[RMDB]
RNA sequence: GGGAACGACUCGAGUAGAGUCGAAAAGCAGCUGUAACUUAUGGCCGUUCACACCUAACUCUACCUGUUGGCUCAACAUGUACACUACAAGGACCCCAACAAGGCUAUGUCACUUGGUGGAGAAUAUAUGAUAAUGGAGGGUUCGCUAGACCAUGUGACGGCCAAUUAAUUUCGAUUAAUUGGCCGUAAAAGAAACAACAACAACAAC
Reactivity to DMS in 0.01 (KOAc 150mM, MgCl2 10mM, bicine 150mM(pH8.5), 24C), signal-to-noise 1, nucleotides 027 to 156: g020c010a030g020c000u000g040u000a060a110c070u000u000a090u020g020g010c020c020g010u000u010c030a080c010a050c030c040u000a020a040c030u000c000u000a070c030c010u000g030u040u000g020g010c050u000c040a050a070c040a050u010g010u000a060c040a100c100u010a050c040a140a100g000g000a220c060c040c010c000a000a050c010a020a030g000g030c030u000a080u010g020u000c060a100c030u000u000g000g020u000g020g030a130g010a120a070u000a080u010a120u010g100a110u020a070a130u000g010g020a140g020g010g010u000u010c020g000c040u000a140g010a100c030c010a070u000g010u000g000
Reactivity to 2A3 in 0.01 (KOAc 150mM, MgCl2 10mM, bicine 150mM(pH8.5), 24C), signal-to-noise 3, nucleotides 027 to 156: g010c030a010g050c010u080g030u150a030a100c030u120u140a080u250g040g010c020c030g080u130u090c030a030c000a020c030c020u040a070a030c030u050c000u060a060c000c030u030g030u100u060g040g000c040u030c050a010a030c010a110u040g020u050a050c080a020c130u090a030c040a040a130g020g010a120c000c000c000c010a030a010c000a060a000g020g020c060u160a070u180g030u030c050a050c180u060u060g010g010u020g020g030a060g020a050a000u090a020u020a030u100g150a130u080a210a030u100g040g030a050g060g000g040u000u000c010g000c060u080a000g010a080c010c040a000u050g020u000g030